[RMDB]
RNA sequence: GGGAACGACUCGAGUAGAGUCGAAAAGCAUCAGUGAGGUUAAUCCUUACCUGUUGUCUUAGAAAUAAGACUACAGCACAUGAUGAUUGAAUUCUAUGAAUACGUGAUUAUAUUCUGUAUUCUUAAAAUCAACCAAAGCUUUCGAGCUUUGGUUGAUAAAAGAAACAACAACAACAAC
Reactivity to DMS in 0.01 (KOAc 150mM, MgCl2 10mM, bicine 150mM(pH8.5), 24C), signal-to-noise 1, nucleotides 027 to 126: g010c020a000u000c020a040g000u000g000a020g000g020u010u020a070a170u030c000c000u000u080a060c010c020u010g030u000u000g000u010c020u000u000a000g020a060a170a060u020a010a010g010a000c020u000a010c000a000g030c300a020c300a120u000g010a000u000g010a090u020u000g020a040a140u000u000c010u000a010u000g010a010a020u000a020c000g010u000g040a050u010u070a160u060a090u010u020c000u000g000u000a000u010u000c000u060u000a040a090a070
Reactivity to 2A3 in 0.01 (KOAc 150mM, MgCl2 10mM, bicine 150mM(pH8.5), 24C), signal-to-noise 4, nucleotides 027 to 126: g000c000a010u000c000a000g000u000g060a020g000g060u130u300a150a090u280c000c000u010u060a050c000c000u010g010u010u020g000u000c000u020u040a010g020a040a030a000u020a010a010g000a010c000u010a000c000a000g040c040a030c010a200u070g010a030u020g010a030u020u100g110a090a090u080u060c050u090a100u150g000a000a010u020a000c060g050u050g040a010u010u250a130u120a130u300u040c020u010g010u000a010u000u000c000u010u050a120a110a010

Structure probing data (DMS and 2A3) for a 177-nucleotide construct. Conditions: 150 mM KOAc, 10 mM MgCl2 and 150 mM bicine (pH 8.5), 24 C. DMS (dimethyl sulfate) methylates the pairing face of unpaired adenines and cytosines. For 2A3, 2,003 sequencing reads were counted. Reactivities are given for positions 27 through 126.